[RMDB]
RNA sequence: GGGAACGACUCGAGUAGAGUCGAAAACUACCGUGUUCGCACGGUAGAAAAAAGAUAUGGAUGGAACUACCACUAUAGCAUCGUUGAAAUCGGAAACGAUGGAGAUGCUAAUAAUGUGGCCAUCCUAAGUCAAAAAAGUGCCGUUUCGACGGCACAAACUGGCUUAGAGAUUCGUCUCUAAGCCAGUAAAAGAAACAACAACAACAAC
Reactivity to DMS in 0.01 (KOAc 150mM, MgCl2 10mM, bicine 150mM(pH8.5), 24C), signal-to-noise 2, nucleotides 027 to 156: c000u000a000c000c000g040u010g020u020u000c290g040c000a020c030g010g010u000a010g000a010a030a130a080a090a090g010a090u000a230u000g000g000a020u010g010g000a070a080c060u030a280c030c000a050c040u000a110u000a000g020c010a030u000c000g020u010u010g000a080a120a110u000c010g020g020a160a100a220c000g000a030u000g000g000a220g000a020u000g000c010u010a020a040u000a050a060u010g000u000g000g000c010c010a000u000c000c000u000a000a040g000u000c020a000a100a110a060a110a100g000u000g020c020c000g050u000u000u000c220g010a100c040g010g000c010a000c010a000a010
Reactivity to 2A3 in 0.01 (KOAc 150mM, MgCl2 10mM, bicine 150mM(pH8.5), 24C), signal-to-noise 3, nucleotides 027 to 156: c000u010a010c010c000g000u000g030u020u080c270g020c100a000c000g000g000u020a000g000a020a030a000a000a000a000g050a020u040a020u060g000g000a000u010g020g000a060a040c060u160a100c270c000a010c010u050a050u010a140g000c000a000u010c010g120u190u130g080a120a180a010u010c010g020g020a040a040a040c010g000a010u020g030g000a040g000a000u000g010c000u010a010a030u100a010a000u140g010u010g000g000c000c000a000u000c000c000u000a060a010g020u000c080a010a020a050a070a050a080g000u010g000c000c000g020u000u040u130c220g070a030c000g000g000c000a000c000a000a000

About this RNA
This 207-nucleotide RNA was probed chemically with DMS and 2A3. The DMS profile rests on 3,701 reads. For 2A3 the reverse transcriptase was SuperScript II with manganese. The 2A3 profile rests on 4,680 reads. Conditions: 150 mM KOAc, 10 mM MgCl2 and 150 mM bicine (pH 8.5), 24 C. The data come from the RNA Mapping Database (RMDB), library RNAMAK.